[RMDB]
RNA sequence: GGGAACGACUCGAGUAGAGUCGAAAAGGUCGGUCCGGAAGGGAAUCUGUGAACGGAUCGACCAAGGUGUAGUGCAUCACAGAUUCCCUUCGCACUGCACCAGUGGAGAUGCGAAAGCAUUUCCACAGCACGUACAUGCCUUCGGGCAUGUACGUGCAAAAGAAACAACAACAACAAC
Reactivity to 2A3 in 0.01 (KOAc 150mM, MgCl2 10mM, bicine 150mM(pH8.5), 24C), signal-to-noise 1, nucleotides 027 to 126: g010g000u000c000g010g000u010c010c000g030g030a060a060g000g040g000a040a080u000c000u040g010u030g050a130a010c040g030g000a040u040c030g000a000c000c000a000a030g000g000u090g030u030a030g010u010g050c030a050u040c010a090c030a030g000a000u000u000c020c000c000u030u030c040g000c020a000c020u000g000c040a000c000c000a000g000u000g000g030a010g000a000u010g010c010g090a060a010a020g010c000a020u000u000u010c000c000a000c000a000